[RMDB]
RNA sequence: GGGAACGACUCGAGUAGAGUCGAAAAUAAAAAGAGAAAUACUUAUAAUUUUAUUGCCAAGAGAUAGACACCCAAUUUAUUUGAAGACUAUUUCCAAACGACAGUUUUUUCUGUGUCUCCGUCUUCAUAUAAAUCCUAGGUUCGCCUAGGAUUUAUAAAAAGAAACAACAACAACAAC
Reactivity to DMS in 0.01 (KOAc 150mM, MgCl2 10mM, bicine 150mM(pH8.5), 24C), signal-to-noise 1, nucleotides 027 to 126: u000a050a160a070a050a070g000a090g000a150a090a060u060a010c000u040u030a130u070a120a050u030u040u000u000a080u040u040g000c000c070a110a050g000a070g040a060u020a000g000a090c030a020c000c000c000a010a020u060u050u010a070u040u010u010g000a000a030g000a030c010u000a020u030u010u010c010c120a040a170a100c160g010a020c090a030g010u000u010u000u010u010u010c040u000g000u020g000u000c030u010c030c100g020u000c030u010u010c070a150
Reactivity to 2A3 in 0.01 (KOAc 150mM, MgCl2 10mM, bicine 150mM(pH8.5), 24C), signal-to-noise 1, nucleotides 027 to 126: u100a010a080a010a000a000g040a000g040a030a110a120u160a110c000u130u120a160u210a300a300u270u100u000u080a110u080u000g050c000c010a050a010g000a020g000a110u040a070g040a030c010a060c010c030c030a020a020u060u110u120a080u090u120u000g010a010a010g000a010c010u020a060u100u020u040c000c050a110a090a040c030g110a010c000a010g000u000u000u000u030u060u240c040u030g050u010g030u030c000u040c090c000g060u010c010u000u010c030a000